Structure probing data (DMS and 2A3) for a 177-nucleotide construct.
Reactivities are given for positions 27 through 126.
Source: RMDB library OK1LIB, as collected in RNAgym.
The RNA was probed in 150 mM KOAc, 10 mM MgCl2 and 150 mM bicine (pH 8.5) at 24 C.
RNA sequence: GGGAACGACUCGAGUAGAGUCGAAAACCAGUGGAUAUUUACACCAAGGAAACUCUCAAGGUGCAGGUAUCCCUGGAAGUCAGAUGUGAUGAAGAGUUUAGGUCAUUGGAUGAGGUCCUCCAUGCUCAAAGAUAGAUGUAUUCGUACAUCUAUCUUUAAAAGAAACAACAACAACAAC
Reactivity to DMS in 0.01 (KOAc 150mM, MgCl2 10mM, bicine 150mM(pH8.5), 24C), signal-to-noise 9, nucleotides 027 to 126: c000c000a010g010u050g010g010a000u000a000u000u010u010a130c000a010c010c010a050a300g000g000a120a140a140c230u030c080u020c040a050a300g000g010u010g010c090a010g010g010u000a010u000c000c000c010u000g000g010a070a060g010u010c050a050g000a080u010g010u000g000a050u000g010a080a060g000a050g010u000u010u010a070g000g010u010c030a060u010u020g000g000a060u010g000a110g000g010u000c020c010u000c040c040a060u010g000c060u010c090
Reactivity to 2A3 in 0.01 (KOAc 150mM, MgCl2 10mM, bicine 150mM(pH8.5), 24C), signal-to-noise 9, nucleotides 027 to 126: c010c000a020g030u170g100g000a000u000a010u020u030u030a030c000a000c000c010a060a050g150g020a120a210a170c130u120c010u010c140a090a080g000g000u010g000c010a000g010g010u010a000u000c000c000c000u000g000g030a090a030g060u060c060a020g020a160u100g070u070g060a050u060g050a080a060g040a020g060u070u130u180a100g030g020u050c060a080u050u120g060g020a060u060g060a050g040g070u040c000c000u020c020c010a050u100g010c010u050c060